[RMDB]
Background: This 177-nucleotide RNA was probed chemically with DMS.

RNA sequence: GGGAACGACUCGAGUAGAGUCGAAAAGAUAUGGACUAUGACCCAGCGAUAUAGGCGUUUGACGGGGCUAUAGGAUCGGAAACGAUCCUAUAGCCCCCGAGCCUAGAUCGCUGCAUAGUCCUAAGUCGUAAUGAGAAAUGUUCGCAUUUCUCAUUACAAAAGAAACAACAACAACAAC
Reactivity to DMS in 0.01 (KOAc 150mM, MgCl2 10mM, bicine 150mM(pH8.5), 24C), signal-to-noise 2, nucleotides 027 to 126: g000a110u010a300u020g010g010a010c000u000a010u000g020a300c190c300c170a020g010c010g010a000u000a080u000a010g010g010c000g020u000u000u010g020a060c300g010g010g020g010c000u020a010u010a040g030g020a000u000c000g020g000a080a090a270c000g040a020u000c000c000u000a000u000a030g020c000c010c020c000c000g000a030g010c000c010u000a000g020a000u000c010g000c000u000g030c010a000u000a000g000u000c000c000u000a010a040g020u020c100

Conditions: 150 mM KOAc, 10 mM MgCl2 and 150 mM bicine (pH 8.5), 24 C.
It was measured as part of the RMDB library TTRINS.